The record gives the reactivity of an RNA of 177 nucleotides to DMS and 2A3. For 2A3 the reverse transcriptase was SuperScript II with manganese. DMS adducts were read by reverse transcription with MarathonRT.
[RMDB]
RNA sequence: GGGAACGACUCGAGUAGAGUCGAAAACAAUAAAAAUAAAAAUGCUAGAUAGCUCAUUGAUUCUAGAUGCUAUUCCCUUUGCCCUUUCGUACUACAUUCCAGAAGUUCGUGAGGUGGGUGUAAAAUAUCCUAUGCUAGCAUUCGUGCUAGCAUAGGAAAAAGAAACAACAACAACAAC
Reactivity to DMS in 0.01 (KOAc 150mM, MgCl2 10mM, bicine 150mM(pH8.5), 24C), signal-to-noise 2, nucleotides 027 to 126: c140a030a040u140a000a010a150a060a040u060a100a050a070a090a020u010g000c010u000a070g000a010u010a130g030c050u020c080a090u030u030g010a080u000u010c040u000a020g000a050u000g000c130u030a120u010u010c010c000c010u020u040u030g020c020c020c040u000u000u040c000g040u080a030c040u000a110c070a070u060u030c140c060a060g050a060a180g010u000u000c020g010u000g000a080g030g000u010g030g010g010u000g010u020a000a030a020a070u050a150
Reactivity to 2A3 in 0.01 (KOAc 150mM, MgCl2 10mM, bicine 150mM(pH8.5), 24C), signal-to-noise 1, nucleotides 027 to 126: c040a110a110u300a060a030a000a000a010u260a020a170a040a020a000u110g000c000u000a030g010a250u010a100g020c060u120c240a150u040u200g080a070u240u000c030u030a070g040a120u080g030c000u050a000u030u090c000c010c040u040u180u010g000c000c000c000u020u040u020c070g000u000a000c020u020a020c000a080u000u140c000c030a010g020a090a050g040u050u090c060g060u210g000a020g050g030u070g000g080g000u000g120u080a140a160a040a030u090a040